[RMDB]
RNA sequence: GGGAACGACUCGAGUAGAGUCGAAAAAGUCCGGCCUGCCCGCACGGCACCGGAGCCGGGGACCCAACCGAGAACUUUGGGGUGAAUCGGCCUCACCGCCCUCGACGCGAGGACGGUCCGCCGUAGGAGUUUUUAAGUGUUUCGACACUUAAAAACUAAAAGAAACAACAACAACAAC
Reactivity to 2A3 in 0.01 (KOAc 150mM, MgCl2 10mM, bicine 150mM(pH8.5), 24C), signal-to-noise 9, nucleotides 027 to 126: a000g100u020c010c000g000g000c020c060u080g010c020c010c010g170c070a090c090g010g010c010a010c020c070g040g010a010g020c010c000g000g000g020g070a050c000c000c000a000a010c020c010g040a030g030a160a060c030u050u060u060g030g010g000g010u070g090a030a070u070c010g010g000c000c010u030c020a010c000c000g000c000c010c000u020c010g270a280c110g050c140g140a000g000g010a000c010g000g010u010c010c010g000c000c010g010u010a050g010g100
Reactivity to DMS in 0.01 (KOAc 150mM, MgCl2 10mM, bicine 150mM(pH8.5), 24C), signal-to-noise 7, nucleotides 027 to 126: a120g010u010c010c010g010g000c060c070u010g010c030c010c100g010c210a140c170g000g020c010a080c130c060g010g000a080g010c040c010g010g000g000g000a140c000c010c000a120a110c060c030g000a100g000a070a120c070u010u010u020g000g000g000g010u010g000a100a170u010c010g000g000c010c030u000c100a040c010c020g010c020c010c000u000c000g010a170c180g010c070g030a030g000g010a020c000g000g000u000c090c180g000c010c000g010u010a100g020g010